[RMDB]
Chemical mapping of a 207-nucleotide RNA with 2A3 and DMS. Conditions: 150 mM KOAc, 10 mM MgCl2 and 150 mM bicine (pH 8.5), 24 C. The 2A3 profile rests on 906 reads. Source: RMDB library OK3TST, as collected in RNAgym. 2A3 adducts were read by reverse transcription with SuperScript II with manganese. DMS adducts were read by reverse transcription with MarathonRT.
RNA sequence: GGGAACGACUCGAGUAGAGUCGAAAAGAUUAUGUGGGAGAGGCGCCCUUUCGUUUCAUCGGAUAAUUAAUUGCCAGUCGCUGGCUUUAGCGAUAUUGAUGUCAUCUGUAGCGAUGACUAUGCUACUUUAAGGUAUGAUCCGGAUACCCCCGGUAAAAAUGAUGAUGAGGUUCGCCUCAUCAUCAUUAAAAGAAACAACAACAACAAC
Reactivity to 2A3 in 0.01 (KOAc 150mM, MgCl2 10mM, bicine 150mM(pH8.5), 24C), signal-to-noise 2, nucleotides 027 to 156: g040a040u150u110a050u280g050u060g010g040g000a090g000a000g040g000c010g000c000c010c000u020u080u070c050g030u080u060u050c030a050u050c010g020g030a040u040a130a030u240u130a080a070u140u160g000c000c020a060g050u080c020g020c120u020g060g000c000u170u100u070a000g000c000g010a000u000a050u050u170g060a080u060g010u020c010a000u000c060u090g120u160a030g040c030g080a020u000g000a000c000u000a040u170g030c010u010a070c000u020u140u170a050a020g010g000u060a000u100g010a040u040c020c030g000g000a020u070a050c020c000c000c000c010g020g000u040a060a070a020
Reactivity to DMS in 0.01 (KOAc 150mM, MgCl2 10mM, bicine 150mM(pH8.5), 24C), signal-to-noise 2, nucleotides 027 to 156: g020a150u000u000a040u010g010u010g000g050g030a130g020a090g040g030c030g000c090c040c020u010u010u030c040g030u000u000u020c040a080u020c010g030g020a070u000a070a090u020u000a080a100u000u000g000c020c050a110g000u000c040g020c030u020g020g000c140u010u000u000a050g030c030g020a050u000a070u000u010g010a180u010g000u000c010a000u010c000u010g010u020a150g030c100g000a070u000g010a050c010u000a000u000g000c000u000a070c090u010u000u000a070a070g020g030u000a040u000g010a090u010c020c010g020g010a150u000a130c060c020c040c000c040g010g000u000a010a040a060